[RMDB]
RNA sequence: GGGAACGACUCGAGUAGAGUCGAAAAGCGACGUGAUCGAGGACGCGAUAGAAGACGACGUCGACGCCGUGGUCCACGCCGGCGACCUCUUUCACGAUCGCCGGCCGACGCUGGUCGACCUGCAGGGCGUGACGAGUACUUUCGAGUACUCGUCACGAAAAGAAACAACAACAACAAC
Reactivity to DMS in 0.01 (KOAc 150mM, MgCl2 10mM, bicine 150mM(pH8.5), 24C), signal-to-noise 3, nucleotides 027 to 126: g000c010g010a070c040g000u000g000a040u000c060g000a040g020g030a130c010g010c030g010a100u010a080g020a110a130g000a300c070g000a060c050g010u000c140g010a060c060g020c120c080g010u000g000g000u000c020c080a070c130g010c010c010g000g020c000g010a030c000c020u000c060u000u000u000c070a060c090g000a060u000c000g010c010c020g000g020c140c010g000a040c050g000c070u000g010g010u000c020g010a060c030c030u000g020c110a070g010g010g010
Reactivity to 2A3 in 0.01 (KOAc 150mM, MgCl2 10mM, bicine 150mM(pH8.5), 24C), signal-to-noise 3, nucleotides 027 to 126: g020c010g050a050c010g020u030g030a100u070c020g010a030g030g020a020c020g020c030g050a080u050a160g210a120a000g090a030c060g030a030c010g040u040c010g020a080c040g060c030c020g110u090g110g000u050c010c020a020c100g030c020c010g020g020c000g010a030c010c000u040c000u060u190u090c060a070c100g060a190u000c000g020c000c000g010g000c020c000g000a020c020g000c060u060g030g000u010c000g000a040c000c010u070g030c040a080g050g010g100